[RMDB]
RNA sequence: GGGAACGACUCGAGUAGAGUCGAAAACGCGCCGACCUGACCCGACCGGCGAUCAACCACUACUUCGCCAACAAGCGGGUGCUCUACCAAGAGGUGGUGGAGCAAACCCACGAACUCGUCAUUGUGGGCCAGGAUGACGGUUCGCCGUCAUCCUGGCAAAAGAAACAACAACAACAAC
Reactivity to 2A3 in 0.01 (KOAc 150mM, MgCl2 10mM, bicine 150mM(pH8.5), 24C), signal-to-noise 3, nucleotides 027 to 126: c040g000c000g010c010c020g020a060c040c020u070g030a050c000c000c000g000a050c030c010g000g000c000g010a080u170c070a020a050c020c080a020c020u180a030c020u080u070c050g020c010c000a070a030c020a170a030g040c050g000g030g020u030g000c000u000c010u000a010c000c000a090a100g110a080g300g290u140g000g000u000g020g010a000g000c000a000a110a130c010c000c000a020c010g030a070a040c020u030c080g060u040c070a040u050u020g030u070g010g030